RNA sequence: GGGAACGACUCGAGUAGAGUCGAAAAUUUAUUUUCAAGGAAGUAGGCUGCUUGAAUCUUGCGCAAGAAUGUAAUUCCUUGUUUUUUUCCUUGGAGUUCAGCGGCUUUGACUGCAAGACAAGAAAUACUAUCCGUGGGGAUUCGUCCCCACGGAUAGAAAAGAAACAACAACAACAAC
Reactivity to DMS in 0.01 (KOAc 150mM, MgCl2 10mM, bicine 150mM(pH8.5), 24C), signal-to-noise 1, nucleotides 027 to 126: u010u100u050a000u040u000u000u000c040a040a070g000g020a080a050g010u020a100g000g000c040u010g000c030u000u000g030a110a110u010c010u000u050g010c020g040c070a000a050g000a030a050u070g000u000a060a110u000u030c030c010u000u010g000u000u020u030u000u050u060u000c170c020u010u050g020g000a050g000u010u000c050a090g020c130g000g000c070u010u000u010g000a040c000u000g010c010a000a110g000a180c090a010a050g020a060a070a060u050a210
Reactivity to 2A3 in 0.01 (KOAc 150mM, MgCl2 10mM, bicine 150mM(pH8.5), 24C), signal-to-noise 2, nucleotides 027 to 126: u110u040u000a130u000u160u060u030c000a020a010g050g010a040a090g070u220a090g110g040c070u070g040c070u220u190g030a140a140u040c000u010u160g030c050g000c090a040a030g010a050a080u140g010u250a000a070u000u030c000c000u000u000g040u080u180u050u000u000u030u100c030c000u000u050g070g000a120g000u110u110c060a060g000c020g040g050c000u060u130u090g130a220c060u070g000c050a020a060g030a030c040a000a080g140a060a090a000u140a080